[RMDB]
RNA sequence: GGGAACGACUCGAGUAGAGUCGAAAAUUACACUGAGAGCAUUUAGCCUGAUUACUCUUUAAAUCAAAUCAGGCAAUAGAGAGAAACUCGAGAGGUGAAAACCCAACAGCAUUCUGAAAUGUAUUUGAAGGCAACGCUACCUUCGGGUAGCGUUGAAGUAUUACUUUGAGUUCGCUCAAAGUAAUACAAAAGAAACAACAACAACAAC
Reactivity to 2A3 in 0.01 (KOAc 150mM, MgCl2 10mM, bicine 150mM(pH8.5), 24C), signal-to-noise 3, nucleotides 027 to 156: u120u100a050c080a030c050u070g030a000g000a010g060c030a050u060u050u100a020g020c010c000u000g010a010u000u100a090c040u060c080u190u270u160a060a120a120u180c080a040a000a020u000c000a000g000g010c000a000a000u010a000g020a000g010a000g020a070a070a010c020u020c030g040a070g010a030g060g000u010g000a070a010a000a030c000c030c000a020a010c010a030g070c010a050u090u070c070u190g050a130a100a070u130g050u050a190u060u100u200g070a070a020g050g000c000a000a000c000g010c000u000a000c000c000u010u040c100g000g000g000u000a000g000c010g000u000u000g000a000a000
Reactivity to DMS in 0.01 (KOAc 150mM, MgCl2 10mM, bicine 150mM(pH8.5), 24C), signal-to-noise 1, nucleotides 027 to 156: u020u000a130c060a070c110u010g000a010g000a030g050c000a300u020u010u000a090g040c000c000u000g060a040u000u000a100c040u010c010u000u020u000a030a040a030u010c090a080a110a000u010c000a000g000g020c010a150a030u000a080g000a100g010a210g000a130a130a080c030u000c010g020a150g020a100g020g030u030g000a060a090a110a080c020c070c010a070a110c020a050g030c070a020u000u010c040u000g020a120a020a130u000g010u000a040u000u000u020g000a110a090g030g030c000a010a000c000g000c010u000a000c000c000u000u010c250g090g050g000u000a000g050c020g000u000u000g000a000a080
Structure probing data (2A3 and DMS) for a 207-nucleotide construct. Source: RMDB library M2RFPK, as collected in RNAgym. For 2A3, 1,790 sequencing reads were counted.